[RMDB]
RNA sequence: GGGAACGACUCGAGUAGAGUCGAAAAGUUUACGCUCCAAGAUCGGUGGAUAGCAGCCCUAUCAAUAUCUAGGAGAACUGUGAUAUGUUUAGAAGAUUAGGUAGUCUCUAAACAGAACAAUUUACCUCAUACGUUAGGACGUUCGCGUCCUAACGAAUCAAUUACCUGUCUUCGGACAGGUAAUUGAAAAAGAAACAACAACAACAAC
Reactivity to 2A3 in 0.01 (KOAc 150mM, MgCl2 10mM, bicine 150mM(pH8.5), 24C), signal-to-noise 7, nucleotides 027 to 156: g010u010u020u070a040c040g010c010u000c000c010a040a020g010a040u060c110g130g220u110g140g030a030u020a020g020c070a030g010c040c010c000u020a030u020c020a040a050u030a010u130c020u030a050g020g010a020g020a070a050c100u130g010u010g080a040u060a020u090g010u010u000u000a060g000a300a010g000a030u050u040a030g030g010u050a020g020u010c000u000c000u000a000a010a000c010a030g020a040a020c080a030a030u050u060u070a020c010c010u050c060a100u120a160c020g000u000u000a000g000g000a010c000g000u030u040c250g020c000g070u000c000c000u000a000a000c000g000a000a020
Reactivity to DMS in 0.01 (KOAc 150mM, MgCl2 10mM, bicine 150mM(pH8.5), 24C), signal-to-noise 3, nucleotides 027 to 156: g020u010u010u000a080c060g000c000u000c000c000a090a160g000a070u000c120g040g050u000g010g000a100u000a080g000c040a250g020c200c150c000u000a060u000c050a080a140u000a110u000c080u010a100g010g030a300g030a030a060c040u010g010u000g000a150u000a170u000g010u000u000u000a010g010a040a110g020a040u000u000a130g030g030u000a140g000u010c000u000c000u000a010a010a020c000a040g000a100a080c070a030a030u000u000u000a090c010c010u010c100a150u010a130c030g010u000u000a010g030g010a020c000g000u000u000c300g030c030g020u000c010c000u000a000a010c000g000a030a060